[RMDB]
RNA sequence: GGGAACGACUCGAGUAGAGUCGAAAAGAUAUGGACGCAGAUACGCUGGGAGUGACUGGGUCGGAAACGACCCUGUCACGAAGAACAGCGAGUAGUCCUAAGUCAAAGUCAGGGUUCGCCCUGACAACUAACUAUUGUUCUUCGGAACAAUAGUUAGAAAAGAAACAACAACAACAAC
Reactivity to 2A3 in 0.01 (KOAc 150mM, MgCl2 10mM, bicine 150mM(pH8.5), 24C), signal-to-noise 5, nucleotides 027 to 126: g020a010u050a020u080g000g010a000c010g020c180a050g070a280u140a210c030g010c020u010g010g000g060a190g030u010g010a000c010u030g000g000g000u000c000g010g020a020a020a010c010g000a000c000c000c000u000g000u000c000a000c000g000a010a010g030a030a010c000a000g000c010g010a010g000u050a050g000u000c000c000u020a070a010g020u010c060a180a070a020g010u000c010a000g040g030g020u050u120c200g150c010c000c000u000g000a010c000a000a000
Reactivity to DMS in 0.01 (KOAc 150mM, MgCl2 10mM, bicine 150mM(pH8.5), 24C), signal-to-noise 9, nucleotides 027 to 126: g000a040u000a150u010g000g000a020c010g020c170a100g010a220u010a080c050g010c000u010g000g000g000a090g020u000g010a010c000u000g000g010g010u000c010g010g000a030a040a090c010g010a010c000c000c000u000g000u000c000a000c000g000a060a110g000a140a180c020a010g000c000g000a090g010u010a100g010u000c000c000u000a020a100g000u000c030a080a100a110g000u000c000a010g010g000g010u000u010c280g010c010c000c000u000g000a000c010a030a130